[RMDB]
Annotation:
The record gives the reactivity of an RNA of 177 nucleotides to DMS and 2A3.

RNA sequence: GGGAACGACUCGAGUAGAGUCGAAAAUUUGUCUCUCCUUUCUCCCUGCUUUCAAGUCUGUGAAUUAAUUGGAGUCAUUCCCAAGGGAGGAGGGUCACUUUAUUGAAUUUUAAGACAAGGCGGGGCCCAACGCACUCUGAUUCGUCAGAGUGCGUUGAAAAGAAACAACAACAACAAC
Reactivity to DMS in 0.01 (KOAc 150mM, MgCl2 10mM, bicine 150mM(pH8.5), 24C), signal-to-noise 2, nucleotides 027 to 126: u030u020u010g000u000c010u040c080u000c010c010u000u000u010c020u010c010c000c000u000g010c120u010u000u010c120a040a120g010u000c040u000g010u000g010a060a100u000u020a060a150u010u000g010g010a010g020u010c010a080u010u000c000c000c020a130a040g000g010g030a020g010g000a010g000g000g010u010c040a020c140u000u000u010a060u010u010g020a020a080u000u000u000u000a090a130g000a030c030a040a060g020g020c030g010g000g040g010c300c120
Reactivity to 2A3 in 0.01 (KOAc 150mM, MgCl2 10mM, bicine 150mM(pH8.5), 24C), signal-to-noise 1, nucleotides 027 to 126: u100u010u090g000u000c000u000c000u020c020c020u000u000u000c050u080c010c000c000u050g010c050u080u140u190c050a120a140g030u030c030u110g140u090g160a100a110u110u140a120a190u130u160g050g020a010g000u000c010a030u030u000c010c020c000a000a000g040g000g000a000g020g010a020g010g010g020u010c070a040c070u110u190u280a170u100u120g070a060a060u030u030u050u300a030a000g000a000c000a010a000g000g010c040g000g000g000g030c010c000
Source: RMDB library OK2TRN, as collected in RNAgym.